[RMDB]
RNA sequence: GGGAACGACUCGAGUAGAGUCGAAAAGAUAUGGACGACACUGGUCCUUCUUGGAUUUAUCGGAAACGAUUGUCAGAAGCCAGGUCGUCCUAAGUCAAAUCCGUAUGUAGUUCGCUACAUACGGAAACCUUAUAGAUCGGUUCGCCGAUCUAUAAGGAAAAGAAACAACAACAACAAC
Reactivity to DMS in 0.01 (KOAc 150mM, MgCl2 10mM, bicine 150mM(pH8.5), 24C), signal-to-noise 6, nucleotides 027 to 126: g000a030u000a300u000g000g000a010c000g010a010c010a120c010u000g000g000u010c230c050u000u000c010u000u010g020g020a020u010u000u000a010u000c010g010g000a100a070a200c010g010a010u000u000g010u000c010a030g010a020a020g010c000c000a010g000g000u000c000g000u000c000c000u000a000a060g000u010c030a080a120a130u000c000c010g010u000a000u000g010u000a010g000u000u010c230g020c010u000a000c000a000u000a010c000g010g000a000a010a040
Reactivity to 2A3 in 0.01 (KOAc 150mM, MgCl2 10mM, bicine 150mM(pH8.5), 24C), signal-to-noise 8, nucleotides 027 to 126: g010a010u060a030u130g020g000a000c010g010a000c080a090c300u020g000g050u170c080c070u010u000c020u060u180g120g000a040u260u300u210a030u050c010g010g020a030a040a060c020g010a010u010u030g010u010c000a000g000a030a000g020c010c000a000g000g000u000c000g000u000c000c000u000a010a000g000u000c010a000a000a190u010c000c000g000u000a000u000g010u000a000g020u040u060c270g030c160u000a000c000a000u000a010c000g000g010a010a010a000